[RMDB]
RNA sequence: GGGAACGACUCGAGUAGAGUCGAAAACUCAAUGUAGGGAAUAACAUUGAAUUGAUACAAAUACCUUUUUCGGUGUAGGGAAAAACACCGAAUUGAUACAAAUACCUUUCUCAAUGUAGGGGAUAACAAAACAGGCAUCGCUUCGGCGAUGCCUGAACAAAUUAGUUACCUUCGGGUAACUAAUUUGAAAAGAAACAACAACAACAAC
Reactivity to DMS in 0.01 (KOAc 150mM, MgCl2 10mM, bicine 150mM(pH8.5), 24C), signal-to-noise 2, nucleotides 027 to 156: c020u000c020a050a120u000g000u010a070g000g030g000a160a100u010a060a080c010a020u010u000g010a030a030u000u020g000a100u000a070c040a040a140a070u010a020c010c000u000u000u000u000u000c010g020g020u000g050u000a110g030g020g010a100a070a080a110a100c000a000c000c020g000a000a010u000u000g010a050u000a050c020a040a140a050u000a010c010c000u000u000u000c070u000c020a020a020u000g020u010a060g000g010g030g020a120u010a090a060c040a040a070a080a130c010a010g010g030c010a010u000c000g040c020u000u000c290g090g020c000g030a010u010g000c000c000u000g000a010a040
Reactivity to 2A3 in 0.01 (KOAc 150mM, MgCl2 10mM, bicine 150mM(pH8.5), 24C), signal-to-noise 6, nucleotides 027 to 156: c010u010c000a000a010u010g020u040a090g030g110g090a080a140u120a110a030c020a010u010u020g020a090a080u080u140g050a080u160a200c080a040a120a020u160a080c010c000u030u020u000u000u010c000g000g000u000g000u010a010g020g010g060a070a140a080a050a000c000a010c010c010g000a020a000u010u020g000a010u010a020c020a020a140a010u080a070c000c010u030u120u090c040u060c070a080a190u170g050u130a070g010g020g000g010a020u050a170a080c080a040a060a010a020c010a000g010g000c000a000u000c000g010c020u090u050c170g040g000c000g000a000u000g010c000c000u000g000a000a000